Source: RMDB library 15KLIB, as collected in RNAgym. Chemical mapping of a 170-nucleotide RNA with DMS and 2A3. DMS adducts were read by reverse transcription with MarathonRT. Values cover nucleotides 27 to 129. For 2A3 the reverse transcriptase was SuperScript II with manganese.
RNA sequence: GGGAACGACUCGAGUAGAGUCGAAAACAGAAGAUGUUACUGAAUCUGUGCAAGAAGAAGCACAACCAGUAGAAGUACCUGUUGAAGAUAUUGCGCAGGUUGUCAUAGCUGACACCUUACAGGAAACAACCGGGUAGGUUCGCCUACCCGAAAAGAAACAACAACAACAAC
Reactivity to DMS in 0.01 (KOAc 150mM, MgCl2 10mM, bicine 150mM(pH8.5), 24C), signal-to-noise 8, nucleotides 027 to 129: c070a020g030a070a030g000a030u010g020u070u020a050c060u000g030a090a040u030c040u000g010u040g030c020a070a120g020a120a120g000a150a140g060c090a100c010a000a020c100c080a000g030u040a040g030a080a050g020u000a070c060c050u000g040u030u030g020a070a060g020a120u040a050u050u010g030c070g040c040a010g000g000u020u070g030u030c030a030u000a090g020c230u000g020a060c050a030c000c040u030u030a010c090a080g030g020a050a070a070c130a010a020c080
Reactivity to 2A3 in 0.01 (KOAc 150mM, MgCl2 10mM, bicine 150mM(pH8.5), 24C), signal-to-noise 9, nucleotides 027 to 129: c030a000g120a110a030g070a100u090g030u150u040a030c020u030g040a050a070u040c060u040g000u000g000c030a030a050g070a100a020g070a090a000g180c020a010c000a030a040c030c030a000g010u030a020g030a160a020g050u060a060c000c020u030g010u070u070g070a070a030g040a070u120a080u160u170g030c060g000c020a000g020g000u040u080g020u020c020a020u080a140g060c130u050g030a000c000a030c020c000u030u050a040c040a040g080g020a040a080a030c030a000a020c040